[RMDB]
RNA sequence: GGGAACGACUCGAGUAGAGUCGAAAAUUAUAGAUUGGAUUUUAUCUUAUCCCCUUUCCCUCUCCCGAGUGCACUCAGUUUAACUGUUGUCAGUUUUUACUCAGUGUUGGAUUUAAUUAUGUAGGACCAUUACAUAAGUGUUCGCACUUAUGUAAUGAAAAGAAACAACAACAACAAC
Reactivity to DMS in 0.01 (KOAc 150mM, MgCl2 10mM, bicine 150mM(pH8.5), 24C), signal-to-noise 9, nucleotides 027 to 126: u020u020a120u030a050g010a060u000u000g000g000a100u020u020u020u020a040u010c030u010u010a080u010c010c010c010c050u000u010u010c010c000c000u000c040u000c020c000c020g010a150g020u010g000c020a020c010u000c160a040g010u000u010u010a030a040c020u000g010u020u020g010u020c030a030g010u000u000u000u010u000a030c020u010c150a060g020u000g020u000u010g000g010a130u020u010u010a060a080u010u010a080u010g020u010a070g010g010a140c190
Reactivity to 2A3 in 0.01 (KOAc 150mM, MgCl2 10mM, bicine 150mM(pH8.5), 24C), signal-to-noise 9, nucleotides 027 to 126: u170u080a090u070a150g050a060u030u100g070g030a070u070u150u080u110a070u090c020u050u070a060u090c000c000c000c000u000u040u020c010c000c000u020c000u010c010c000c000g040a040g050u090g010c000a000c010u010c020a010g010u010u030u050a040a010c010u010g120u230u170g130u280c010a010g000u000u010u000u030u060a010c010u010c010a010g000u010g010u040u060g010g010a030u030u080u200a140a160u150u160a120u180g100u060a040g020g040a020c010